[RMDB]
RNA sequence: GGGAACGACUCGAGUAGAGUCGAAAAAAUAAUCUUCAGGGCAGGGUGAAAUUCCCGAUCGGCGGUAAAGUCCGCGAGCCGAACGAAAAAGGUUUGGCAGGAACCGGUGAGAUUCCGGUACCGACAGGUCCAUAUCUAACUUCGGUUAGAUAUGGACAAAAGAAACAACAACAACAAC
Reactivity to DMS in 0.01 (KOAc 150mM, MgCl2 10mM, bicine 150mM(pH8.5), 24C), signal-to-noise 2, nucleotides 027 to 126: a070a060u000a150a040u000c030u010u000c060a110g010g010g040c150a030g000g020g020u020g000a050a080a130u000u000c000c010c010g030a100u020c000g040g000c000g000g000u000a100a180a000g010u010c000c000g040c010g000a140g000c010c010g010a000a010c000g030a070a120a160a230a160g020g010u000u000u000g010g020c000a050g010g000a030a000c020c010g000g000u010g000a190g000a260u000u010c000c000g000g010u020a010c000c000g020a090c300a110g010

Overview: An RNA of 177 nucleotides, treated with DMS and read out base by base. The reactions ran in a buffer of 150 mM KOAc, 10 mM MgCl2 and 150 mM bicine (pH 8.5), at 24 C. Reactivities are given for positions 27 through 126.